RNA sequence: GGGAACGACUCGAGUAGAGUCGAAAAUUGGCGAAUGCCUGUGGAUCUACAUUUGGUGCGGGUUCGAGACCCGUCAGAGCCCGGCUCUGUAGCUCAAUGGUAGAGCGGUGUAUUCACAUAAACUUGUAAAAGACACGUGCCUUCGGGCACGUGUCAACAGGGAGUAUUAGUUCGCUAAUACUCCCUGAAAAGAAACAACAACAACAAC
Reactivity to DMS in 0.01 (KOAc 150mM, MgCl2 10mM, bicine 150mM(pH8.5), 24C), signal-to-noise 1, nucleotides 027 to 156: u000u000g030g060c000g000a050a110u000g050c060c030u010g010u000g020g010a080u010c030u000a010c030a100u010u010u000g000g010u000g030c030g030g040g050u000u000c020g010a300g000a050c000c010c010g080u000c040a050g000a060g000c000c080c070g030g000c010u010c030u010g020u000a070g010c000u000c030a110a100u000g010g000u010a080g000a110g060c010g060g000u000g000u010a160u010u010c030a010c050a040u000a030a060a140c030u000u030g000u000a040a030a150a160g000a020c010a010c000g040u000g010c030c000u000u000c300g040g020g040c010a010c000g000u000g010u000c000a000a040
Reactivity to 2A3 in 0.01 (KOAc 150mM, MgCl2 10mM, bicine 150mM(pH8.5), 24C), signal-to-noise 2, nucleotides 027 to 156: u060u010g030g000c020g070a260a060u300g000c020c060u090g000u010g000g030a040u020c040u090a020c020a090u040u080u190g040g000u010g010c000g010g020g000u000u010c000g010a010g040a050c000c000c000g030u010c000a000g000a000g030c080c270c060g100g050c010u000c010u010g020u020a010g000c000u000c020a050a030u130g300g000u170a020g000a020g030c000g010g000u020g000u000a020u000u040c000a000c020a010u190a090a100a080c130u080u050g010u160a030a070a030a030g020a010c020a040c000g000u000g000c020c050u020u040c210g000g020g000c040a000c000g000u000g000u000c000a000a000